Overview: An RNA of 177 nucleotides, treated with 2A3 and DMS and read out base by base. Values cover nucleotides 27 to 126. For 2A3 the reverse transcriptase was SuperScript II with manganese. Values are in units of 0.01, from 0 to 300, in steps of 10. The reactions ran in a buffer of 150 mM KOAc, 10 mM MgCl2 and 150 mM bicine (pH 8.5), at 24 C.

[RMDB]
RNA sequence: GGGAACGACUCGAGUAGAGUCGAAAACGGGGUCGCGCCUACGGUGCACGUCAGCGCCAGCGAGCGCAACCUGCAGGUCAUUGACGCCACCUGCCCGCUGGUCACCAAGGUGCACAACGAGGCCAGGGCCCGUACUCCUAUUCGUAGGAGUACGGGCAAAAGAAACAACAACAACAAC
Reactivity to 2A3 in 0.01 (KOAc 150mM, MgCl2 10mM, bicine 150mM(pH8.5), 24C), signal-to-noise 3, nucleotides 027 to 126: c020g000g000g040g080u060c020g060c040g000c090c000u060a090c020g020g000u000g010c010a010c060g220u150c080a040g010c000g020c060c000a010g030c030g040a050g030c090g020c050a020a090c000c010u050g000c000a010g000g020u030c030a120u040u300g060a090c120g020c020c020a030c000c010u020g000c000c000c040g000c010u000g020g020u100c020a020c080c040a090a100g110g010u010g020c020a020c000a050a090c020g000a020g020g000c010c000a040g020g030
Reactivity to DMS in 0.01 (KOAc 150mM, MgCl2 10mM, bicine 150mM(pH8.5), 24C), signal-to-noise 2, nucleotides 027 to 126: c060g020g000g000g030u000c040g000c250g000c000c000u000a120c200g000g000u000g000c070a010c000g000u010c110a150g010c300g010c010c010a050g000c040g000a090g000c170g010c120a060a000c040c080u020g000c000a030g000g000u010c180a100u010u060g010a060c050g000c170c030a050c000c030u030g000c060c040c030g050c000u000g000g000u000c070a060c240c050a100a090g010g020u030g000c000a000c010a060a090c040g000a130g000g000c010c060a070g000g000